[RMDB]
RNA sequence: GGGAACGACUCGAGUAGAGUCGAAAACGAUAUGAAGUCGAUGUGAGACUUGGGCUCGCCGGAAUCCGGUGCAGAUAGAUACUCCUUGAUCUUUGGUAUGAUUUCUAGGAGGAUGGACUCCUUCGUGUCCAUUUAAGGUGUAAAACUAAUCCGCCGAAUCUAUCAGUGGUUUCGACCACUGAUAGAUAAAAGAAACAACAACAACAAC
Reactivity to DMS in 0.01 (KOAc 150mM, MgCl2 10mM, bicine 150mM(pH8.5), 24C), signal-to-noise 3, nucleotides 027 to 156: c030g020a090u000a030u000g000a070a090g020u010c010g010a140u010g020u000g010a180g010a060c060u000u000g010g030g030c010u000c030g020c040c020g020g010a180a090u010c000c030g030g010u000g000c050a040g020a060u000a080g020a190u000a070c010u000c010c010u010u000g010a050u010c020u000u000u000g030g000u010a060u010g000a080u000u000u000c070u000a080g020g010a030g020g000a070u010g010g010a100c010u000c080c130u000u000c090g010u010g000u000c020c010a090u010u010u000a080a070g070g030u010g000u000a060a060a060a110c060u010a080a090u000c060c020g030c010c010g000a150
Reactivity to 2A3 in 0.01 (KOAc 150mM, MgCl2 10mM, bicine 150mM(pH8.5), 24C), signal-to-noise 6, nucleotides 027 to 156: c020g010a030u060a070u300g080a070a010g030u010c020g050a110u120g050u090g140a110g010a050c040u070u060g050g080g000c010u020c020g010c030c010g020g060a160a110u080c060c010g010g020u030g000c040a010g020a080u110a050g040a010u100a100c000u000c010c000u010u020g030a020u050c010u050u090u090g100g040u190a080u180g050a030u050u070u040c040u060a020g010g010a010g020g010a010u040g000g000a020c010u040c050c000u090u060c070g030u030g010u020c000c010a030u050u070u070a090a040g010g020u040g020u070a080a120a030a020c030u050a050a060u020c030c020g000c010c020g050a040